Source: RMDB library M2PK50, as collected in RNAgym.
The record gives the reactivity of an RNA of 177 nucleotides to DMS and 2A3.
Values cover nucleotides 27 to 126.
The reactions ran in a buffer of 150 mM KOAc, 10 mM MgCl2 and 150 mM bicine (pH 8.5), at 24 C.
The 2A3 profile rests on 34,256 reads.
[RMDB]
RNA sequence: GGGAACGACUCGAGUAGAGUCGAAAAGUGGCAUACUUCGGUAUGCCACAAACCAGACCCUAUCUGGAACACGCUCUACUGCGUGAUCCCAAGUUGAUCCCAAAAGUCGUGGGUUCGCCCACGACAACUAUGCAUUAAUCUUCGGAUUAAUGCAUAGAAAAGAAACAACAACAACAAC
Reactivity to DMS in 0.01 (KOAc 150mM, MgCl2 10mM, bicine 150mM(pH8.5), 24C), signal-to-noise 7, nucleotides 027 to 126: g010u000g000g020c000a010u000a000c010u000u020c200g030g010u000a010u000g000c000c000a000c000a000a050a070c140c100a190g000a030c060c020c040u000a060u000c090u000g000g000a060a080c050a030c020g010c000u000c300u000a100c180u000g010c010g010u000g010a070u000c010c010c070a080a020g000u000u000g010a080u000c000c010c000a060a100a100a120g010u000c000g030u000g010g010g010u000u000c250g000c000c000c000a010c000g000a000c000a020a070
Reactivity to 2A3 in 0.01 (KOAc 150mM, MgCl2 10mM, bicine 150mM(pH8.5), 24C), signal-to-noise 8, nucleotides 027 to 126: g000u000g000g000c010a010u010a010c010u030u070c210g080g000u000a000u000g000c010c000a000c000a000a000a000c020c000a020g010a010c020c000c010u030a040u090c080u080g000g010a020a020c010a000c010g030c010u070c090u280a200c170u150g030c000g010u010g020a050u030c000c000c010a030a020g010u020u030g040a050u010c000c000c000a010a090a040a060g010u000c000g000u000g020g010g020u020u030c220g090c010c000c000a000c000g000a000c000a000a000